Chemical mapping of a 207-nucleotide RNA with DMS and 2A3. The data come from the RNA Mapping Database (RMDB), library M2RFPK. Conditions: 150 mM KOAc, 10 mM MgCl2 and 150 mM bicine (pH 8.5), 24 C. DMS adducts were read by reverse transcription with MarathonRT.
RNA sequence: GGGAACGACUCGAGUAGAGUCGAAAAUGGGCCGUGUGCUUAACCAGGACAAGAUCUCCUUCUCUCCAACGUUGUGGCCAACUCAUGAUUCUCCUAACCUGUGCUUGGAGAGACGUGGACCCAGAGUAAAACGAAGGGUGCUUCGGCACCCUUCGAAGUUAAUUCGAAAGUUCGCUUUCGAAUUAACAAAAGAAACAACAACAACAAC
Reactivity to DMS in 0.01 (KOAc 150mM, MgCl2 10mM, bicine 150mM(pH8.5), 24C), signal-to-noise 2, nucleotides 027 to 156: u000g000g040g030c020c050g000u000g040u000g040c040u010u000a110a090c080c050a120g030g030a180c050a120a120g010a160u020c070u020c040c010u000u000c010u000c000u000c000c020a030a120c070g030u000u000g020u010g020g040c030c020a040a060c050u010c060a090u000g000a120u010u000c020u000c000c000u020a100a080c030c040u020g040u000g020c070u010u000g020g020a070g020a030g020a020c060g000u010g000g000a080c020c010c020a240g010a210g000u000a050a060a080a190c010g000a030a020g010g000g000u000g030c000u000u000c270g040g000c000a010c000c000c000u000u000c000g010a010a080
Reactivity to 2A3 in 0.01 (KOAc 150mM, MgCl2 10mM, bicine 150mM(pH8.5), 24C), signal-to-noise 2, nucleotides 027 to 156: u010g010g010g000c030c010g050u030g010u070g060c050u080u070a060a050c040c010a030g000g040a010c080a100a070g040a170u050c050u050c040c000u080u020c010u000c000u020c010c020a020a030c070g060u080u110g100u070g060g020c000c030a060a030c040u120c080a060u110g120a140u150u030c060u030c060c000u060a070a100c010c020u060g090u170g100c040u020u020g000g000a010g000a000g000a000c040g020u050g000g030a070c010c000c000a030g010a030g110u110a040a090a020a010c010g000a000a000g010g020g000u000g000c000u020u030c080g070g000c020a010c010c000c010u000u000c000g010a000a000
2A3 adducts were read by reverse transcription with SuperScript II with manganese.